[RMDB]
The data come from the RNA Mapping Database (RMDB), library OK3TST. The record gives the reactivity of an RNA of 207 nucleotides to 2A3 and DMS. Values cover nucleotides 27 to 156. For DMS the reverse transcriptase was MarathonRT. The 2A3 profile rests on 1,078 reads. The reactions ran in a buffer of 150 mM KOAc, 10 mM MgCl2 and 150 mM bicine (pH 8.5), at 24 C.
RNA sequence: GGGAACGACUCGAGUAGAGUCGAAAAUUGAGCUUUCACAAUGACAAAUUGAGGGUGAGGGGUUUGAAUGAGUACACCUUCUUUUUAAGGCCUGAGAAGUUAAUACAUAAAAGAGCGUGGAUUCCAUACAAGCUUGUGACUCUGGUCCUAUAAUUGGUCUCACAAAGUGAUUCGUCACUUUGUGAGAAAAAGAAACAACAACAACAAC
Reactivity to 2A3 in 0.01 (KOAc 150mM, MgCl2 10mM, bicine 150mM(pH8.5), 24C), signal-to-noise 2, nucleotides 027 to 156: u040u050g010a020g040c000u060u100u080c050a040c060a040a140u110g070a020c020a050a140a120u100u090g010a050g000g010g040u030g020a060g000g020g020g030u000u010u110g090a090a050u070g010a020g080u050a010c000a020c010c000u040u060c000u010u070u030u040u060a060a030g020g020c000c030u060g040a050g010a050a000g010u010u050a080a020u120a180c040a030u150a110a100a030a030g060a000g010c050g020u010g070g000a070u160u020c050c010a040u090a120c030a030a020g060c000u090u060g030u060g050a010c020u020c010u040g030g000u050c020c000u100a080u180a100a050u220u080g090g000
Reactivity to DMS in 0.01 (KOAc 150mM, MgCl2 10mM, bicine 150mM(pH8.5), 24C), signal-to-noise 1, nucleotides 027 to 156: u000u010g000a140g020c060u000u000u000c020a080c060a090a100u010g000a130c070a040a130a150u000u000g010a080g010g020g000u000g020a080g010g030g070g020u000u000u000g000a060a070u000g010a120g020u000a160c040a040c020c030u000u000c020u010u000u020u010u000a050a250g000g010c040c040u010g030a120g000a080a090g020u000u000a050a070u000a150c050a000u010a040a060a040a090g000a030g000c060g000u010g000g010a100u000u000c030c050a150u000a080c050a030a040g010c000u000u000g010u000g020a070c010u000c040u000g020g000u010c020c030u000a070u000a090a130u010u000g010g030